RNA sequence: GGGAACGACUCGAGUAGAGUCGAAAAGGCACUAUCUUCGGAUAGUGCCAAAACGGGAAAACGGCCUCCCGAAAUGAAAAGAUCGAAACGAUCAAAAGGCCGAAAUCUCCCGGUUCGCCGGGAGAAAGAAUUACUUAGGGUUCGCCCUAAGUAAUUCAAAAGAAACAACAACAACAAC
Reactivity to DMS in 0.01 (KOAc 150mM, MgCl2 10mM, bicine 150mM(pH8.5), 24C), signal-to-noise 2, nucleotides 027 to 126: g000g020c000a000c000u000a010u000c000u000u010c160g010g000a000u000a000g010u010g000c000c000a010a020a050a230c000g020g010g000a040a070a110a210c030g010g000c000c000u000c000c000c030g020a050a060a090u030g020a070a050a080a110g000a020u000c000g010a080a100a140c100g000a010u010c000a060a050a080a130g000g010c000c000g000a040a090a160u000c010u000c000c000c010g010g000u000u000c220g000c000c000g010g000g000a010g010a010a020a110
Reactivity to 2A3 in 0.01 (KOAc 150mM, MgCl2 10mM, bicine 150mM(pH8.5), 24C), signal-to-noise 2, nucleotides 027 to 126: g000g000c000a010c010u010a020u010c020u020u050c080g000g000a000u010a000g000u000g020c010c000a000a000a000a000c000g000g000g000a010a060a020a100c000g000g010c000c020u010c000c010c030g040a170a090a020u140g010a060a040a030a090g000a010u010c010g070a300a170a200c100g020a010u010c030a030a050a040a020g000g000c020c000g000a000a000a000u000c000u010c000c010c010g000g040u020u040c180g050c040c020g000g000g010a000g000a000a000a000
Structure probing data (DMS and 2A3) for a 177-nucleotide construct. Values cover nucleotides 27 to 126. It was measured as part of the RMDB library M2PK50.